[RMDB]
RNA sequence: GGGAACGACUCGAGUAGAGUCGAAAAUCUCCUGGAGUUUUUGUCACAAUUUGAUAUUGUUUAGCUGAUCUAACAAAUGGAGCUGCGACAGAAAGAUUUAAACUUCUAGGUUCAAAUCCGAAUCCGCUGUAGGAUGAACGUUCGCGUUCAUCCUACAAAAAGAAACAACAACAACAAC
Reactivity to DMS in 0.01 (KOAc 150mM, MgCl2 10mM, bicine 150mM(pH8.5), 24C), signal-to-noise 1, nucleotides 027 to 126: u010c100u010c000c070u000g000g000a110g000u000u000u000u000u000g000u000c000a060c020a100a040u040u000u050g030a110u050a030u000u000g000u010u000u000a080g000c090u020g000a150u010c050u010a010a180c230a010a040a120u000g000g000a010g000c050u000g010c070g000a140c140a000g000a150a110a180g000a020u000u000u000a020a000a020c000u010u000c080u090a080g010g040u000u010c030a110a070a000u020c090c050g010a120a070u040c060c000g000c200
Reactivity to 2A3 in 0.01 (KOAc 150mM, MgCl2 10mM, bicine 150mM(pH8.5), 24C), signal-to-noise 3, nucleotides 027 to 126: u030c000u000c000c020u000g000g040a030g000u020u020u000u050u050g060u030c040a040c070a200a100u070u120u110g140a130u130a140u300u070g020u000u100u060a010g020c020u020g020a090u030c020u150a130a090c110a280a170a150u110g080g000a000g000c020u020g000c030g000a010c000a060g050a030a080a000g020a030u000u130u000a080a020a020c020u080u020c050u100a020g030g050u050u120c060a090a090a150u040c050c010g050a000a010u100c030c060g040c160

The record gives the reactivity of an RNA of 177 nucleotides to DMS and 2A3. The RNA was probed in 150 mM KOAc, 10 mM MgCl2 and 150 mM bicine (pH 8.5) at 24 C. For DMS, 1,018 sequencing reads were counted. For 2A3 the reverse transcriptase was SuperScript II with manganese. Reactivities are given for positions 27 through 126.